[RMDB]
RNA sequence: GGGAACGACUCGAGUAGAGUCGAAAAAGAAUCUCCUUCGGGAGAUUCUGAACCACAAAGCUGAUUGCGGAUGACGACGAGGCAGCUCGUGUCGAGCAACCACCGAGAACAGGUUCGCCUGUUCUAAGAGAGAUAUGUCGUUCGCGACAUAUCUCUCAAAAGAAACAACAACAACAAC
Reactivity to 2A3 in 0.01 (KOAc 150mM, MgCl2 10mM, bicine 150mM(pH8.5), 24C), signal-to-noise 2, nucleotides 027 to 126: a020g010a000a000u020c000u010c010c030u040u070c190g080g000g000a000g010a010u010u040c000u010g000a010a050c010c010a020c040a050a210a020g050c090u070g030a120u020u070g010c020g070g080a090u190g000a030c190g000a010c030g030a030g040g070c040a140g090c060u000c010g000u040g010u040c020g040a010g020c000a010a020c040c000a070c060c030g140a000g000a050a000c000a000g000g030u060u030c180g060c040c000u000g000u000u010c020u010a050a010
Reactivity to DMS in 0.01 (KOAc 150mM, MgCl2 10mM, bicine 150mM(pH8.5), 24C), signal-to-noise 2, nucleotides 027 to 126: a000g000a010a000u010c000u000c010c000u010u000c190g020g020g000a010g000a010u000u000c000u000g000a080a300c030c010a080c240a070a090a080g020c140u000g010a050u000u000g000c020g010g000a130u010g000a060c010g000a020c010g000a050g010g000c300a120g000c020u000c010g030u000g000u000c010g000a240g000c000a060a030c010c000a060c120c050g000a040g000a010a020c000a010g010g000u000u000c200g010c000c000u000g010u000u000c020u000a080a070

The record gives the reactivity of an RNA of 177 nucleotides to 2A3 and DMS. Values cover nucleotides 27 to 126. For 2A3, 1,515 sequencing reads were counted. For DMS, 1,361 sequencing reads were counted. The RNA was probed in 150 mM KOAc, 10 mM MgCl2 and 150 mM bicine (pH 8.5) at 24 C. In probing experiments dimethyl sulfate is read out at A N1 and C N3, which are open when not base-paired.